[RMDB]
RNA sequence: GGGAACGACUCGAGUAGAGUCGAAAAAGCAUCGGUGUACGCACCGAUGCAUGGGAGGGACGGCCCUCCUAUCCACCAGCAUAUCAGCCGCGGGGACGACCCUGAGUCGUGGCUACGGCCACGACAAUGGGUUCCAUGGAUUCGUCCAUGGAACCCAAAAAGAAACAACAACAACAAC
Reactivity to 2A3 in 0.01 (KOAc 150mM, MgCl2 10mM, bicine 150mM(pH8.5), 24C), signal-to-noise 2, nucleotides 027 to 126: a000g000c000a000u000c030g000g000u010g030u060a010c250g020c110a000c000c000g000a000u000g020c000a000u020g000g000g000a000g040g000g030a070c010g300g090c000c000c000u000c000c010u000a050u050c000c030a040c020c030a000g020c030a050u120a140u260c050a040g050c020c040g050c020g010g030g020g040a020c020g220a230c000c000c000u060g030a030g030u000c000g000u020g000g040c020u010a060c300g140g000c010c000a000c000g070a000c000a000a010